[RMDB]
RNA sequence: GGGAACGACUCGAGUAGAGUCGAAAAUUGCGACCUUAACUUGCGAGAGCAAGCUGAUGGUGCUUAGCCUAUCUAAGCCCCGUCCAAGACCGUAGGUGAAUAAGUUUUCUUAUUCUUAAUAAAAACCUGUCCUAAUCCACUUCGGUGGAUUAGGACAAAAAGAAACAACAACAACAAC
Reactivity to 2A3 in 0.01 (KOAc 150mM, MgCl2 10mM, bicine 150mM(pH8.5), 24C), signal-to-noise 1, nucleotides 027 to 126: u100u020g050c000g060a070c010c000u050u090a010a070c000u070u010g010c030g000a000g010a000g090c000a010a000g060c080u110g010a000u040g000g000u070g000c000u030u040a000g060c020c070u090a080u070c000u020a000a010g000c020c020c000c000g050u000c070c000a080a000g060a010c000c090g040u020a000g000g060u070g070a010a000u010a040a000g010u090u080u200u300c000u000u010a030u000u000c000u030u160a140a110u080a170a170a050a000a010c000c040
This 177-nucleotide RNA was probed chemically with 2A3. Reactivities are given for positions 27 through 126. The reactions ran in a buffer of 150 mM KOAc, 10 mM MgCl2 and 150 mM bicine (pH 8.5), at 24 C. The data come from the RNA Mapping Database (RMDB), library RFM100.